The record gives the reactivity of an RNA of 177 nucleotides to DMS. Source: RMDB library OK2TST, as collected in RNAgym.
RNA sequence: GGGAACGACUCGAGUAGAGUCGAAAAAAUUAGAAACAUGCAUAUGGAGGAAGAUGCAGUCACUAUCCCUCACCACUUACUUGUCCCACCCCCAGUAUCAAAACAAAUGACCUCUGGGCCUGGCCUAGAGAGGAAUACGGUUCGCCGUAUUCCUCUCAAAAGAAACAACAACAACAAC
Reactivity to DMS in 0.01 (KOAc 150mM, MgCl2 10mM, bicine 150mM(pH8.5), 24C), signal-to-noise 1, nucleotides 027 to 126: a030a140u000u040a040g000a080a140a080c070a130u010g020c050a080u000a080u000g010g020a160g000g000a130a100g020a050u010g000c000a020g010u000c110a050c090u020a060u010c040c000c030u000c080a050c060c050a130c090u000u000a080c120u020u000g010u000c030c000c010a300c060c030c000c000c020a060g000u000a080u010c140a000a070a020a080c180a030a040a080u000g000a080c080c030u000c020u000g020g000g020c050c080u000g040g000c000c020u010a090